[RMDB]
RNA sequence: GGGAACGACUCGAGUAGAGUCGAAAAGCAACAUAGAUCGUUCUAUUUACGAACACGCGCGGAUCGUCGGUGGUCGGCGAGCCCACGGACGUACUUGAUCGCGCGAACGAGUAAAAAUCGCCGGCAAGAUAAUACGUUCGUUCGCGAACGUAUUAUCAAAAGAAACAACAACAACAAC
Reactivity to 2A3 in 0.01 (KOAc 150mM, MgCl2 10mM, bicine 150mM(pH8.5), 24C), signal-to-noise 6, nucleotides 027 to 126: g060c030a020a070c020a080u180a070g120a140u090c030g030u040u000c040u050a210u130u210u140a090c080g030a080a010c050a030c080g000c000g000c020g010g080a130u080c000g010u000c050g150g010u000g000g000u020c020g000g030c020g010a050g100c020c010c000a010c000g100g000a000c000g010u040a030c040u100u230g070a120u280c000g000c010g010c000g000a020a010c030g030a020g050u110a000a050a030a040a060u010c020g000c010c020g010g070c040a080a010
Reactivity to DMS in 0.01 (KOAc 150mM, MgCl2 10mM, bicine 150mM(pH8.5), 24C), signal-to-noise 5, nucleotides 027 to 126: g010c050a050a070c100a100u010a090g000a110u000c030g010u000u000c020u010a150u010u000u000a060c100g010a070a070c150a110c060g000c010g010c030g000g010a060u000c000g020u000c010g010g030u000g000g020u010c020g020g010c040g030a030g020c290c000c000a030c010g000g010a030c010g010u000a080c170u010u010g030a080u000c010g010c020g000c010g000a030a020c080g010a140g010u010a020a030a030a040a060u000c020g020c020c000g010g020c200a080a120